[RMDB]
RNA sequence: GGGAACGACUCGAGUAGAGUCGAAAAAAAGUUAGCGUACUAGAGUCGCCGUGAGUACGCAAUGGUUCCGUGAGACUCUACUCGAGCGUAUCACGGAACCCACGUACAUACCGUACGUGCUAUAAAAUAUACCAGGUAAGUUCGCUUACCUGGUAUAAAAAGAAACAACAACAACAAC
Reactivity to 2A3 in 0.01 (KOAc 150mM, MgCl2 10mM, bicine 150mM(pH8.5), 24C), signal-to-noise 1, nucleotides 027 to 126: a000a000a000g100u060u010a070g000c010g000u010a000c010u000a030g100a090g190u110c060g040c090c050g110u060g050a000g000u000a020c000g020c000a000a010u030g020g000u050u000c040c000g000u010g010a040g000a000c000u000c000u000a010c000u000c000g000a000g000c000g000u020a080u010c020a000c010g010g030a020a030c000c000c010a000c000g000u030a000c020a070u200a200c030c150g000u000a000c000g000u010g010c000u070a090u120a230a040a020a010
Reactivity to DMS in 0.01 (KOAc 150mM, MgCl2 10mM, bicine 150mM(pH8.5), 24C), signal-to-noise 3, nucleotides 027 to 126: a070a060a110g000u010u010a110g020c000g000u000a000c020u000a170g000a120g010u000c020g010c050c020g000u000g020a020g000u000a000c010g020c020a040a050u010g010g000u000u000c030c030g010u000g000a230g000a020c010u000c000u000a010c030u000c030g010a010g000c060g010u000a080u000c030a040c020g010g000a030a030c030c070c010a010c000g000u000a000c010a130u000a110c250c180g010u000a000c000g010u000g010c130u000a070u000a030a080a070a110

Structure probing data (2A3 and DMS) for a 177-nucleotide construct. 2A3 adducts were read by reverse transcription with SuperScript II with manganese. Conditions: 150 mM KOAc, 10 mM MgCl2 and 150 mM bicine (pH 8.5), 24 C. The data come from the RNA Mapping Database (RMDB), library M2PK90.